[RMDB]
RNA sequence: GGGAACGACUCGAGUAGAGUCGAAAACGCUGCUGGGUUUGGGGCGCGCCUGAUGCCUACCUAUCAGGAACCACGUGACUCUGGCGGGCAUUGGUCCGAGAGUGCGCCCUGCGCGAGUUUAUGCGCGGCCAGACGUUAAGUUCGCUUAACGUCUGGCAAAAGAAACAACAACAACAAC
Reactivity to 2A3 in 0.01 (KOAc 150mM, MgCl2 10mM, bicine 150mM(pH8.5), 24C), signal-to-noise 1, nucleotides 027 to 126: c040g010c060u080g030c020u040g000g000g120u070u110u110g010g000g010g040c020g000c000g000c010c020u000g020a010u070g010c000c020u030a070c030c020u040a070u030c020a000g020g040a050a070c030c010a060c150g080u060g050a030c010u010c020u100g140g120c030g000g000g000c000a060u030u190g180g000u030c040c030g020a050g000a020g030u010g000c000g020c000c000c010u040g000c000g000c000g000a100g020u010u130u110a120u110g020c050g010c000g030
Reactivity to DMS in 0.01 (KOAc 150mM, MgCl2 10mM, bicine 150mM(pH8.5), 24C), signal-to-noise 1, nucleotides 027 to 126: c160g010c110u020g010c030u000g000g000g010u000u010u000g020g020g020g060c010g080c030g020c010c050u030g050a050u020g010c110c020u000a080c050c080u000a070u000c060a030g000g020a140a110c050c090a120c110g000u020g010a060c030u020c120u000g000g010c000g020g000g000c020a150u020u000g000g030u000c100c030g000a070g010a130g010u010g000c010g030c000c010c010u010g010c010g010c020g000a110g020u010u000u030a080u010g010c030g020c050g000

Structure probing data (2A3 and DMS) for a 177-nucleotide construct. For DMS the reverse transcriptase was MarathonRT. The reactions ran in a buffer of 150 mM KOAc, 10 mM MgCl2 and 150 mM bicine (pH 8.5), at 24 C. 2A3 adducts were read by reverse transcription with SuperScript II with manganese. It was measured as part of the RMDB library OK2TRN.